[RMDB]
RNA sequence: GGGAACGACUCGAGUAGAGUCGAAAAACGGUGCUUUCGAGCACCGUCAGUCUCCUAAGUCCUCGUUGAUCAAUGGAUGAACUAUGAAGUGUCGGAAACGACAUGGAGUUCACAUUGGGAGAGGAUAUGGAAUUUUGGUCUCUAUUCGUAGAGACAAGAAGAUAGUUCCAUUCGUGGAACUAUCUUCAAAAGAAACAACAACAACAAC
Reactivity to 2A3 in 0.01 (KOAc 150mM, MgCl2 10mM, bicine 150mM(pH8.5), 24C), signal-to-noise 5, nucleotides 027 to 156: a010c010g020g000u020g010c020u110u130u220c290g070a010g000c000a000c000c010g000u000c000a000g030u000c020u040c020c000u100a150a060g040u000c010c000u000c010g180u210u020g020a030u000c010a010a010u020g110g110a300u030g070a040a000c020u050a290u300g020a070a040g010u000g000u000c000g020g020a090a050a080c000g000a000c000a010u030g010g030a010g000u010u010c000a000c000a010u000u010g010g000g000a020g010a010g000g000a010u020a030u050g020g030a060a050u090u160u140u300g110g010u000c000u000c000u010a070u070u060c220g130u050a010g010a000g000a000c010a000a040
Reactivity to DMS in 0.01 (KOAc 150mM, MgCl2 10mM, bicine 150mM(pH8.5), 24C), signal-to-noise 2, nucleotides 027 to 156: a020c000g020g030u000g010c000u000u000u000c300g030a110g050c010a020c000c010g010u000c000a100g020u000c050u000c010c000u000a060a300g010u020c000c000u020c000g000u000u010g000a130u010c040a000a050u000g020g020a270u010g040a010a040c010u010a220u000g010a190a300g010u000g030u010c000g000g000a200a090a300c000g000a010c010a000u000g000g010a000g010u010u000c000a030c000a000u000u010g000g020g000a010g140a030g000g010a040u000a050u010g010g020a020a110u000u020u010u000g000g010u000c000u000c010u000a080u000u000c230g000u000a000g000a020g010a030c030a070a120